[RMDB]
RNA sequence: GGGAACGACUCGAGUAGAGUCGAAAAGCGAUAGCGUUCGCGCUAUCGCAAAUAAAUUCAGCGGUUUAAAUUUCGAGGCCAAAACCGCUGAUGGCCUCGAAAAAACUCGACAGUUCGCUGUCGAGAACAAAGAUAGGUACUUCGGUACCUAUCUUUGAAAAGAAACAACAACAACAAC
Reactivity to 2A3 in 0.01 (KOAc 150mM, MgCl2 10mM, bicine 150mM(pH8.5), 24C), signal-to-noise 3, nucleotides 027 to 126: g000c010g000a000u000a000g000c000g000u040u040c190g000c000g000c100u010a000u000c000g010c000a000a000a000u010a000a000a020u100u060c010a020g010c020g050g100u070u150u240a090a230a150u080u150u030c020g010a000g000g000c000c010a000a050a040a110c020c020g000c020u010g010a000u020g000g000c010c000u020c030g000a020a010a010a000a000a010c000u010c010g010a000c010a010g030u040u090c150g060c140u010g000u000c000g000a000g010a010a010
Reactivity to DMS in 0.01 (KOAc 150mM, MgCl2 10mM, bicine 150mM(pH8.5), 24C), signal-to-noise 3, nucleotides 027 to 126: g010c000g010a010u000a010g020c010g030u010u010c190g040c010g020c000u000a000u000c000g020c000a010a030a040u000a060a080a080u000u000c040a030g000c010g010g010u010u000u000a050a100a150u000u000u000c030g000a020g010g010c000c020a030a040a090a110c030c030g000c030u010g010a030u010g010g010c010c000u000c010g000a000a020a030a080a070a110c010u000c000g000a020c010a020g010u010u000c150g000c010u010g010u000c000g000a000g000a090a120
This 177-nucleotide RNA was probed chemically with 2A3 and DMS.
The 2A3 profile rests on 4,906 reads.
The reactions ran in a buffer of 150 mM KOAc, 10 mM MgCl2 and 150 mM bicine (pH 8.5), at 24 C.
It was measured as part of the RMDB library M2PK50.